[RMDB]
Source: RMDB library TTRINS, as collected in RNAgym. This 177-nucleotide RNA was probed chemically with 2A3 and DMS. The RNA was probed in 150 mM KOAc, 10 mM MgCl2 and 150 mM bicine (pH 8.5) at 24 C. DMS adducts were read by reverse transcription with MarathonRT. The 2A3 profile rests on 3,764 reads. For DMS, 1,210 sequencing reads were counted.

RNA sequence: GGGAACGACUCGAGUAGAGUCGAAAAGAUAUGGACAAUCUACCCACCUCCAAAUUGAUGCACUUGGAUUUAAGAUCGGAAACGAUCUUUGUCAGUGCUACCAAUUUGGAGAGGAUUGUCCUAAGUCGUUACUAAGUUCGUUCGCGAACUUAGUAACAAAAGAAACAACAACAACAAC
Reactivity to 2A3 in 0.01 (KOAc 150mM, MgCl2 10mM, bicine 150mM(pH8.5), 24C), signal-to-noise 2, nucleotides 027 to 126: g120a120u300a280u300g000g020a000c010a000a000u040c000u130a300c000c000c010a010c030c000u030c010c000a020a000a020u000u010g010a020u030g000c000a020c020u180u300g220g050a110u300u300u220a030a010g000a000u000c000g040g000a030a080a040c010g000a040u010c060u020u010u010g000u000c000a000g040u000g010c020u010a040c020c000a000a010u020u000u010g000g010a000g010a000g000g000a000u000u000g000u000c000c000u030a030a020g150u090c130
Reactivity to DMS in 0.01 (KOAc 150mM, MgCl2 10mM, bicine 150mM(pH8.5), 24C), signal-to-noise 1, nucleotides 027 to 126: g010a160u010a080u000g000g000a030c000a000a000u010c000u010a180c000c010c020a300c090c010u000c000c000a000a000a040u000u000g040a060u000g000c000a010c000u000u020g120g020a020u010u030u000a010a020g040a010u000c010g020g010a110a100a180c000g020a010u000c000u010u000u010g000u010c000a020g020u020g000c000u000a030c120c000a000a050u000u000u010g000g000a010g010a070g000g000a020u000u000g000u000c000c020u010a000a140g020u010c160